[RMDB]
RNA sequence: GGGAACGACUCGAGUAGAGUCGAAAAGAAGUCAUAGCGUCUUGCUUCAUUUGAUUGGUUUCUUGCUCCAUCGUGGAAGCAUCCUUAAUGAGAUUUAAGGUAUCAAUUCCAGAAGCAGCGGCUAGACAGACUAUUUCCACUUCGGUGGAAAUAGUCUAAAAGAAACAACAACAACAAC
Reactivity to 2A3 in 0.01 (KOAc 150mM, MgCl2 10mM, bicine 150mM(pH8.5), 24C), signal-to-noise 1, nucleotides 027 to 126: g000a030a010g020u000c090a240u000a040g010c010g000u030c090u110u100g000c010u000u000c020a100u060u080u240g050a040u000u010g000g030u010u080u150c080u110u070g020c000u010c010c010a210u150c130g190u200g020g000a090a010g020c010a000u040c000c000u000u000a020a010u110g110a070g020a230u040u060u000a000a010g000g020u020a010u020c010a000a050u040u040c040c050a010g000a050a000g000c040a000g000c000g010g060c010u010a020g010a020c000
Reactivity to DMS in 0.01 (KOAc 150mM, MgCl2 10mM, bicine 150mM(pH8.5), 24C), signal-to-noise 2, nucleotides 027 to 126: g000a130a200g000u010c000a110u010a010g010c000g000u000c060u010u010g010c000u010u020c010a140u000u020u010g000a030u000u000g000g020u000u000u000c140u020u000g020c020u000c010c010a120u020c280g000u010g000g030a020a030g000c040a030u000c000c000u020u000a010a000u000g000a260g030a130u010u000u000a000a010g010g020u000a030u000c020a010a000u000u000c220c290a150g010a000a010g020c010a020g000c040g020g060c010u000a030g010a040c040
Structure probing data (2A3 and DMS) for a 177-nucleotide construct. For DMS the reverse transcriptase was MarathonRT. The 2A3 profile rests on 844 reads. The DMS profile rests on 1,205 reads. Conditions: 150 mM KOAc, 10 mM MgCl2 and 150 mM bicine (pH 8.5), 24 C.